[RMDB]
RNA sequence: GGGAACGACUCGAGUAGAGUCGAAAAUCGAAUCCAGCGCAGGUUCUGACGCGACCGGUGGCAUCACCGAGUUGCUCAAGCCUCAACCUCCUUUUUCUCAUUUCUACGCUUGGUCUCCGGGCGAGGGUGUUUAGCCCGUGGAACCGCAGUUGGUUCCGAUCUAGUUCCACUUCGGUGGAACUAGAUCAAAAGAAACAACAACAACAAC
Reactivity to 2A3 in 0.01 (KOAc 150mM, MgCl2 10mM, bicine 150mM(pH8.5), 24C), signal-to-noise 2, nucleotides 027 to 156: u120c030g040a030a020u060c040c010a020g000c030g000c080a020g020g000u060u060c170u140g040a080c110g020c020g040a020c000c000g000g030u000g030g130c130a180u300c030a140c020c040g070a140g140u000u040g000c000u000c010a020a010g020c030c020u040c010a050a080c010c020u190c040c040u080u140u050u110u050c100u040c130a150u050u250u020c020u100a040c090g080c050u010u050g020g000u140c040u060c050c030g010g000g040c000g020a140g060g100g070u050g030u060u060u100a070g000c010c000c000g000u030g010g010a030a020c000c010g050c170a100g070u180u110g000g000u000u020c010c010
This 207-nucleotide RNA was probed chemically with 2A3.
Reactivities are given for positions 27 through 156.
Values are in units of 0.01, from 0 to 300, in steps of 10.